This 207-nucleotide RNA was probed chemically with 2A3. The RNA was probed in 150 mM KOAc, 10 mM MgCl2 and 150 mM bicine (pH 8.5) at 24 C. The 2A3 profile rests on 1,228 reads.
RNA sequence: GGGAACGACUCGAGUAGAGUCGAAAAAUGGACGCUGGGCUACGUAACAUCCGAAAUUGUCAGAUUGGGACUGAAGCGCGCACGGUCCCAAGAUCUUGGAUUUAUUUCGGUGGUAGCCUGUGCUGAAGCGCGCACGGCAACCGAAAGGUGCGAAAAACGUAGAAAGGUGGUUCGCCACCUUUCUACGAAAAGAAACAACAACAACAAC
Reactivity to 2A3 in 0.01 (KOAc 150mM, MgCl2 10mM, bicine 150mM(pH8.5), 24C), signal-to-noise 2, nucleotides 027 to 156: a010u190g040g040a000c040g020c010u040g000g000g000c000u000a020c010g060u110a100a070c010a220u160c010c000g020a000a000a010u080u080g040u070c110a090g100a300u080u000g020g000g000a000c000u020g050a300a040g000c000g000c000g000c000a000c020g000g000u010c000c000c000a010a020g030a180u080c130u220u280g100g020a030u160u210u020a020u010u010u010c010g000g000u010g000g000u010a000g000c030c000u000g000u000g000c000u030g040a070a020g000c010g000c010g000c000a000c000g030g020c000a020a060c000c010g040a070a100a010g000g000u010g000c000g070a100a000a000a000a010